[RMDB]
RNA sequence: GGGAACGACUCGAGUAGAGUCGAAAAUAGGAUUCAACGCGGAAAACUUUAAACAGUGCGGACGGUUGAAAAAAGAGUGUGAAUGUCUGCAGAACCGUUGUUUUACUGCACAAACGGUGUUAGGUGCCCAUACGUAUGGGUUCGCCCAUACGUAUGGAAAAGAAACAACAACAACAAC
Reactivity to 2A3 in 0.01 (KOAc 150mM, MgCl2 10mM, bicine 150mM(pH8.5), 24C), signal-to-noise 3, nucleotides 027 to 126: u060a000g040g020a000u010u010c020a000a020c010g000c030g170g030a050a090a020a000c010u090u100u140a120a100a050c080a040g020u050g070c020g010g030a010c030g070g010u100u130g030a100a030a010a000a000a020g140a010g040u130g000u060g090a130a040u100g030u030c030u030g010c010a010g030a040a010c030c010g000u000u000g020u020u020u010u030a040c020u030g000c030a000c020a020a120a020c100g080g000u060g010u100u100a040g040g020u010g000c000
Reactivity to DMS in 0.01 (KOAc 150mM, MgCl2 10mM, bicine 150mM(pH8.5), 24C), signal-to-noise 4, nucleotides 027 to 126: u010a110g010g010a170u000u010c030a030a050c020g000c030g000g000a050a070a120a060c060u000u000u010a120a080a140c130a060g000u000g020c070g000g000a080c020g010g000u010u020g000a000a020a070a110a060a070g000a090g020u010g000u010g000a080a050u010g010u000c030u010g010c070a070g000a090a080c110c050g000u010u000g000u000u000u000u000a120c080u000g000c050a040c050a040a040a060c060g010g010u010g010u000u000a040g000g010u000g000c060